Chemical mapping of a 177-nucleotide RNA with DMS and 2A3. Source: RMDB library OK1LIB, as collected in RNAgym. For 2A3, 7,095 sequencing reads were counted. Reactivities are given for positions 27 through 126.

RNA sequence: GGGAACGACUCGAGUAGAGUCGAAAAGUCUCACGAGUGCAUAGACAAAGGUAGUUGACUCCGGCGCUACCAGUACUCGAAUGAAUGCGAAAGAGUUCAAGUAUUCCAACCGGAGAAGAACUCAAAAGAGGUAAAUAGGUUUCGACCUAUUUACCUCAAAAGAAACAACAACAACAAC
Reactivity to DMS in 0.01 (KOAc 150mM, MgCl2 10mM, bicine 150mM(pH8.5), 24C), signal-to-noise 5, nucleotides 027 to 126: g010u000c000u010c000a200c020g000a020g000u000g000c000a140u050a140g020a140c300a140a180a080g000g000u010a000g000u010u010g000a170c020u000c000c000g000g010c110g000c000u000a020c000c000a090g000u000a000c000u000c000g000a120a060u040g020a080a060u050g000c110g000a040a120a050g010a060g000u000u000c030a110a190g020u020a090u020u040c130c190a100a140c020c000g010g000a000g020a230a050g000a000a000c000u000c000a080a030a070a170
Reactivity to 2A3 in 0.01 (KOAc 150mM, MgCl2 10mM, bicine 150mM(pH8.5), 24C), signal-to-noise 6, nucleotides 027 to 126: g050u010c010u000c010a020c020g000a000g000u020g030c000a090u190a160g150a220c120a110a090a010g000g000u010a010g010u060u160g020a040c010u000c000c000g010g000c020g000c000u000a000c000c020a000g000u010a010c000u010c010g000a000a060u120g100a040a030u210g040c130g090a110a120a100g000a070g000u010u010c040a140a080g100u060a230u090u180c070c010a070a060c000c010g000g010a000g000a000a030g000a000a010c000u000c010a000a050a010a040
Conditions: 150 mM KOAc, 10 mM MgCl2 and 150 mM bicine (pH 8.5), 24 C.